The record gives the reactivity of an RNA of 177 nucleotides to 2A3 and DMS. The RNA was probed in 150 mM KOAc, 10 mM MgCl2 and 150 mM bicine (pH 8.5) at 24 C. Source: RMDB library OK1LIB, as collected in RNAgym. The 2A3 profile rests on 1,058 reads. Reactivities are given for positions 27 through 126.
RNA sequence: GGGAACGACUCGAGUAGAGUCGAAAAACAUAUGACAGAUCUCUUGUGGUUGAUGACGAGGAGACGUCCAUCCUUCUGUAUGACAUAUGGGAACAGGAUAACAGCCAGUGGCUGCAGGAUCAGUGCAGUCGCGUAGUUUUUUCGAAAACUACGCGACAAAAGAAACAACAACAACAAC
Reactivity to 2A3 in 0.01 (KOAc 150mM, MgCl2 10mM, bicine 150mM(pH8.5), 24C), signal-to-noise 2, nucleotides 027 to 126: a000c050a020u160a020u060g100a040c020a030g130a090u070c000u020c000u110u160g040u050g120g000u030u080g060a160u190g000a000c050g020a000g080g070a030g030a030c010g020u000c020c010a010u040c000c000u060u000c040u030g090u070a150u050g040a030c020a080u120a030u100g040g000g030a060a110c050a040g100g000a000u060a150a000c000a030g030c000c010a110g010u090g070g000c000u020g050c000a030g050g050a030u080c000a030g060u000g090c010a000
Reactivity to DMS in 0.01 (KOAc 150mM, MgCl2 10mM, bicine 150mM(pH8.5), 24C), signal-to-noise 2, nucleotides 027 to 126: a090c070a070u000a130u010g000a060c100a020g000a020u030c000u010c040u000u070g040u000g010g020u000u040g050a070u050g000a020c020g070a060g030g040a150g070a080c130g000u000c020c120a030u000c000c000u030u030c000u000g000u010a000u020g000a100c100a100u000a000u030g000g010g020a110a110c060a030g000g000a040u050a100a100c150a100g000c010c000a060g050u050g020g000c030u000g050c100a030g050g000a120u000c130a070g000u000g060c090a000